[RMDB]
RNA sequence: GGGAACGACUCGAGUAGAGUCGAAAAGAAAGAAAGAAAUGAGUUUUCUGCGACUGACGGAUUAUUGCAGAGCACUGCAAGGGAACAGAAAAACUGUUUUUCAGCCGACCGUCUGGGCACACCUGAAUCACGACCGGAAGCUUCGGCUUCCGGUCAAUCACCUAAAUAUGUUCGCAUAUUUAGGUGAAAAAGAAACAACAACAACAAC
Reactivity to DMS in 0.01 (KOAc 150mM, MgCl2 10mM, bicine 150mM(pH8.5), 24C), signal-to-noise 1, nucleotides 027 to 156: g010a060a090a150g060a070a280a050g000a090a080a090u000g000a170g060u000u000u000u000c030u000g000c030g030a080c020u010g020a060c020g030g000a180u010u010a100u020u000g030c040a050g000a250g030c220a060c020u000g010c040a040a160g000g010g000a090a070c010a060g000a030a090a060a110a100c060u000g010u000u000u000u000u000c030a110g000c060c020g020a060c030c030g090u000c040u010g000g010g020c000a060c050a060c040c050u000g000a100a130u000c060a090c060g000a050c010c040g050g000a120a070g020c020u020u000c300g050g090c030u000u000c040c000g020g010u000c010a000a010
Reactivity to 2A3 in 0.01 (KOAc 150mM, MgCl2 10mM, bicine 150mM(pH8.5), 24C), signal-to-noise 1, nucleotides 027 to 156: g010a020a000a010g020a030a070a020g020a000a160a110u230g040a100g080u050u040u060u000c060u030g010c040g090a090c060u030g010a000c010g000g040a050u090u110a040u000u220g000c000a000g010a060g170c110a040c290u010g000c010a030a050g030g000g000a000a000c000a000g020a190a050a010a020a030c010u020g030u000u050u010u000u100c010a020g010c010c030g020a030c000c010g010u010c040u060g010g020g010c030a010c010a040c030c030u070g050a060a040u060c040a040c140g000a000c000c010g010g010a000a000g000c010u040u050c180g000g000c000u000u000c010c000g000g010u000c000a000a000